[RMDB]
An RNA of 177 nucleotides, treated with 2A3 and read out base by base. The 2A3 profile rests on 953 reads. Values cover nucleotides 27 to 126. 2A3 adducts were read by reverse transcription with SuperScript II with manganese.
RNA sequence: GGGAACGACUCGAGUAGAGUCGAAAAAGUAGUCCGUACGCGGACUACAGGAGAUGAAGAGAAAGCACCUCCACUGAUUGAUGAUGAAACGCCCACGGUCGGAUUAGCCGCUGAUACGUCAGCGGCAGGGUUAUCGACGAUUCGUCGUCGAUAACCCAAAAGAAACAACAACAACAAC
Reactivity to 2A3 in 0.01 (KOAc 150mM, MgCl2 10mM, bicine 150mM(pH8.5), 24C), signal-to-noise 2, nucleotides 027 to 126: a040g000u010a000g000u000c020c010g000u030a020c260g030c000g140g020a000c000u000a000c000a000g000g030a030g000a010u100g040a050a100g110a000g080a170a030a060g060c020a000c010c010u050c000c040a050c060u030g030a100u020u080g090a100u000g020a000u040g050a060a060a030c060g060c020c000c020a050c020g080g040u080c010g000g050a050u090u130a000g000c000c000g010c000u000g000a000u000a040c230g080u000c020a000g000c000g000g000c000a000